[RMDB]
RNA sequence: GGGAACGACUCGAGUAGAGUCGAAAAGGUGCCCUAGUCGGACACUGCAGUUCCGAUGGAAAGGCUAAGCACGUCGCAAUGACGUAAGGUGGGACUUUUCCUUCUGGAACCAAGCGGUUGGUUCCGAGACGCGUAUAUUCUUCGGAAUAUACGCGUCAAAAGAAACAACAACAACAAC
Reactivity to DMS in 0.01 (KOAc 150mM, MgCl2 10mM, bicine 150mM(pH8.5), 24C), signal-to-noise 2, nucleotides 027 to 126: g020g010u010g000c000c000c050u000a230g020u000c040g000g030a050c040a030c050u000g020c050a220g000u000u000c010c010g010a020u010g000g020a020a040a010g010g000c000u010a070a190g010c080a090c000g000u000c000g010c200a200a130u000g010a010c000g000u000a100a070g010g010u030g000g000g020a100c020u000u000u000u000c000c010u000u000c020u000g050g000a000a000c000c060a040a090g000c040g000g010u010u010g020g020u000u020c000c000g000a110
Reactivity to 2A3 in 0.01 (KOAc 150mM, MgCl2 10mM, bicine 150mM(pH8.5), 24C), signal-to-noise 1, nucleotides 027 to 126: g180g000u130g030c000c000c010u030a040g090u020c040g000g000a010c020a010c040u080g000c010a010g000u030u020c000c010g000a000u020g000g030a030a010a010g010g040c100u090a020a000g030c010a010c020g000u000c010g020c280a300a300u300g010a010c020g040u020a000a090g240g040u090g010g040g110a140c000u010u040u010u090c010c000u000u010c260u250g020g000a030a000c010c010a070a090g070c040g090g060u040u090g050g040u120u020c000c000g000a010

This 177-nucleotide RNA was probed chemically with DMS and 2A3. For 2A3, 972 sequencing reads were counted. 2A3 adducts were read by reverse transcription with SuperScript II with manganese. The reactions ran in a buffer of 150 mM KOAc, 10 mM MgCl2 and 150 mM bicine (pH 8.5), at 24 C. Reactivities are given for positions 27 through 126.